Chemical mapping of a 177-nucleotide RNA with 2A3 and DMS. For 2A3 the reverse transcriptase was SuperScript II with manganese.

RNA sequence: GGGAACGACUCGAGUAGAGUCGAAAAGAUAUGGAUGAUUGGGAGACGUGAUUCGGAAACGAAUCAUACGUCGAGGAUCAAUAUCCUAAGUCGACCUUGUUGCUGUACUUCGGUACAGCAACAAGAAGAUUUGGAAAACGUUCGCGUUUUCCAAAUCAAAAGAAACAACAACAACAAC
Reactivity to 2A3 in 0.01 (KOAc 150mM, MgCl2 10mM, bicine 150mM(pH8.5), 24C), signal-to-noise 1, nucleotides 027 to 126: g000a010u020a030u090g000g000a020u200g050a030u180u030g010g020g010a050g020a000c000g020u030g020a000u010u010c010g020g020a040a030a040c020g000a000a010u000c020a050u200a080c060g000u000c010g010a080g030g000a000u000c000a000a010u000a010u000c010c020u030a110a030g040u020c010g050a080c020c000u000u000g010u000u000g010c000u000g000u010a010c030u040u100c270g160g000u000a000c000a000g020c000a000a000c000a010a000g010a000a010
Reactivity to DMS in 0.01 (KOAc 150mM, MgCl2 10mM, bicine 150mM(pH8.5), 24C), signal-to-noise 3, nucleotides 027 to 126: g000a030u010a210u010g010g010a030u000g020a040u000u000g000g020g000a100g010a010c000g030u000g010a010u000u010c000g020g010a070a050a150c010g020a000a010u000c000a080u010a050c110g020u000c000g000a130g010g000a060u000c010a030a020u000a140u000c000c000u000a040a110g010u000c020g010a110c190c000u000u000g000u000u010g010c000u000g000u000a000c000u000u010c180g040g010u010a010c000a000g010c000a000a000c000a010a000g020a110a100